[RMDB]
RNA sequence: GGGAACGACUCGAGUAGAGUCGAAAACAUCAUAGUCGGGGAGCGCUUGGCCACGGUACCGGGCGGAUUGUCGGCGGCCGCUCGGCUGGCCGAUACGACCGGCGCCCGUUUGGCGUGGGUGCCGCGGCUCACCGUGAUCCUUCGGGAUCACGGUGAGAAAAGAAACAACAACAACAAC
Reactivity to 2A3 in 0.01 (KOAc 150mM, MgCl2 10mM, bicine 150mM(pH8.5), 24C), signal-to-noise 1, nucleotides 027 to 126: c050a080u140c040a040u060a070g050u060c000g020g030g080g060a110g050c040g040c030u020u090g080g020c010c000a020c050g000g020u010a010c000c030g000g030g000c000g020g070a130u080u090g020u030c010g000g040c000g000g000c000c030g110c130u120c100g000g000c020u020g140g000c020c000g030a000u030a020c000g040a020c020c010g000g010c050g050c000c020c000g040u090u130u120g020g030c040g040u030g060g000g000u080g000c020c000g040c020g000g010
Reactivity to DMS in 0.01 (KOAc 150mM, MgCl2 10mM, bicine 150mM(pH8.5), 24C), signal-to-noise 1, nucleotides 027 to 126: c060a100u010c140a120u020a030g040u010c030g000g010g000g000a070g020c050g000c070u010u000g030g020c000c020a050c100g010g010u000a090c070c020g010g010g010c000g020g000a210u000u020g020u000c020g030g000c000g000g000c000c000g010c200u010c160g020g010c030u000g010g020c000c000g010a020u000a030c080g020a050c030c010g040g000c050g000c070c010c050g000u000u000u010g010g010c010g050u000g000g000g000u000g000c010c000g000c050g000g000

Source: RMDB library OK2TST, as collected in RNAgym.
The record gives the reactivity of an RNA of 177 nucleotides to 2A3 and DMS.
Values are in units of 0.01, from 0 to 300, in steps of 10.
The RNA was probed in 150 mM KOAc, 10 mM MgCl2 and 150 mM bicine (pH 8.5) at 24 C.
2A3 adducts were read by reverse transcription with SuperScript II with manganese.